[RMDB]
RNA sequence: GGGAACGACUCGAGUAGAGUCGAAAAGCGCGCGAUUUAGUAACAAGAGGACACACACUUUGGACAGUCACAGUCGAUACCGAACGGAGUUUUCACUGUAACUAUCGCCCGUCUCACUUAUCGGCGACACGUAAUGGAUCUUCGGAUCCAUUACGUGAAAAGAAACAACAACAACAAC
Reactivity to 2A3 in 0.01 (KOAc 150mM, MgCl2 10mM, bicine 150mM(pH8.5), 24C), signal-to-noise 1, nucleotides 027 to 126: g050c030g000c020g000c000g000a020u030u160u010a090g020u030a030a050c060a080a060g070a030g060g030a010c010a000c010a000c000a000c020u060u050u080g000g010a020c080a060g020u030c030a010c030a020g030u090c030g010a010u040a040c010c010g000a060a000c070g040g070a110g040u040u050u030u050c010a030c060u020g020u080a040a020c010u010a010u110c010g030c010c020c000g060u000c010u020c020a070c030u110u100a070u070c050g000g030c000g030a000
Reactivity to DMS in 0.01 (KOAc 150mM, MgCl2 10mM, bicine 150mM(pH8.5), 24C), signal-to-noise 2, nucleotides 027 to 126: g040c040g050c130g010c020g000a010u000u000u030a030g050u010a090a100c090a090a090g000a080g000g000a080c040a050c030a060c100a060c110u000u000u000g000g000a020c020a040g000u010c030a050c070a070g020u000c040g010a040u000a070c100c030g030a120a160c150g000g020a080g000u000u030u000u020c070a040c060u000g000u000a030a030c110u000a080u000c050g010c020c000c050g000u000c070u000c090a070c100u000u010a100u000c070g020g000c040g020a170